This 177-nucleotide RNA was probed chemically with 2A3 and DMS. The RNA was probed in 150 mM KOAc, 10 mM MgCl2 and 150 mM bicine (pH 8.5) at 24 C. The 2A3 profile rests on 1,600 reads.
RNA sequence: GGGAACGACUCGAGUAGAGUCGAAAACUGAAAGUGGUGAUUACACCCUUGCCAAUACUACAACAGAACCACUCAAACUUUUUGCUGCUGAGACUUUACGUGCCACUGAAGAGGCGUCUAAGCAGUCCUCAUACACACCGUUCGCGGUGUGUAUGAGAAAAGAAACAACAACAACAAC
Reactivity to 2A3 in 0.01 (KOAc 150mM, MgCl2 10mM, bicine 150mM(pH8.5), 24C), signal-to-noise 2, nucleotides 027 to 126: c040u030g040a060a000a110g060u090g020g030u020g010a080u070u150a060c020a040c010c010c000u030u050g040c010c030a080a030u030a070c050u050a040c050a120a010c010a060g060a060a000c000c010a030c040u010c060a110a160a200c050u060u080u080u220u230g020c010u010g000c000u030g000a010g000a030c020u120u130u160a080c170g110u090g000c000c000a040c030u060g090a070a020g050a060g120g000c030g000u030c010u010a010a000g040c000a000g010u000c000
Reactivity to DMS in 0.01 (KOAc 150mM, MgCl2 10mM, bicine 150mM(pH8.5), 24C), signal-to-noise 1, nucleotides 027 to 126: c070u020g050a070a070a120g010u000g040g010u000g000a210u020u010a120c070a060c080c020c040u000u000g010c050c050a020a090u000a080c040u000a050c080a040a030c130a080g020a170a060c120c050a080c050u010c130a060a090a080c170u000u010u000u030u010g030c030u010g020c010u000g000a050g010a040c000u000u000u000a080c160g000u020g000c010c020a100c160u000g010a050a130g000a140g000g020c020g040u000c000u000a010a060g000c120a020g000u000c220